[RMDB]
RNA sequence: GGGAACGACUCGAGUAGAGUCGAAAAUCACGUUAGGGUGAUAUAACGAGGCGAGAGUUAUAUCAUCAUAGUGCGAUUUCUAUUAUGACAUAAAAUACGUUUUGGAUUUUAAAACACUUGACCUUCUACGAUAAUCAUGUUUCGACAUGAUUAUCGUAAAAGAAACAACAACAACAAC
Reactivity to DMS in 0.01 (KOAc 150mM, MgCl2 10mM, bicine 150mM(pH8.5), 24C), signal-to-noise 4, nucleotides 027 to 126: u000c020a040c020g000u000u000a010g000g020g010u000g010a000u000a000u000a020a000c000g020a150g010g020c090g010a060g000a200g010u000u000a010u000a000u000c010a030u000c000a020u010a000g010u000g000c050g010a010u010u000u010c060u010a080u010u010a110u030g010a070c120a090u000a040a040a020a070u010a040c050g010u000u010u010u010g000g000a090u020u000u010u010a030a050a120a090c150a080c160u000u020g000a130c160c010u000u000c050u010
Reactivity to 2A3 in 0.01 (KOAc 150mM, MgCl2 10mM, bicine 150mM(pH8.5), 24C), signal-to-noise 9, nucleotides 027 to 126: u020c000a010c010g010u020u050a050g000g000g010u000g000a000u000a000u000a000a020c050g010a080g150g080c120g070a120g020a000g080u000u000a010u000a000u000c000a000u000c000a000u010a010g010u010g020c020g010a000u000u050u040c060u060a160u200u070a140u250g080a040c020a060u220a070a080a070a060u140a060c080g040u050u060u090u160g100g010a120u060u050u070u190a080a120a030a020c100a040c070u050u140g050a080c000c000u050u000c010u010